[RMDB]
Source: RMDB library OK2TRN, as collected in RNAgym. Structure probing data (2A3 and DMS) for a 177-nucleotide construct. For 2A3 the reverse transcriptase was SuperScript II with manganese. For 2A3, 3,077 sequencing reads were counted.
RNA sequence: GGGAACGACUCGAGUAGAGUCGAAAAGGCCAUCGCGCAGUUCUCCAACAGCGAGCCUGGCCCCGAUGGCCAGCCUGUCCUGGUCUGCACCGACUUGGCCGCCAGGGGCCUGGACAUGCCGGCGGCGCGUGUCCCAAGGAUUCGUCCUUGGGACACGAAAAGAAACAACAACAACAAC
Reactivity to 2A3 in 0.01 (KOAc 150mM, MgCl2 10mM, bicine 150mM(pH8.5), 24C), signal-to-noise 3, nucleotides 027 to 126: g050g000c000c000a040u010c000g020c030g010c050a000g020u140u120c010u000c020c050a240a290c040a150g140c070g070a010g010c010c010u080g090g070c000c040c010c040g040a080u050g030g000c010c010a010g040c030c030u060g010u020c020c050u040g010g000u020c100u120g080c170a080c060c040g100a100c080u100u150g060g010c030c000g030c010c000a030g090g000g000g000c000c000u000g000g000a010c010a030u140g090c070c010g020g000c000g000g020c070g000
Reactivity to DMS in 0.01 (KOAc 150mM, MgCl2 10mM, bicine 150mM(pH8.5), 24C), signal-to-noise 3, nucleotides 027 to 126: g010g010c020c010a030u000c020g030c300g040c030a060g000u010u000c000u010c010c070a190a140c230a120g000c060g010a060g010c300c000u000g000g000c010c010c110c010g000a090u010g020g000c010c010a030g010c040c040u010g010u010c050c040u000g000g000u000c090u020g010c160a110c110c070g010a140c040u000u000g020g000c000c070g010c020c070a190g000g000g000g010c010c010u000g000g010a050c080a080u010g010c060c040g010g020c050g000g000c020g030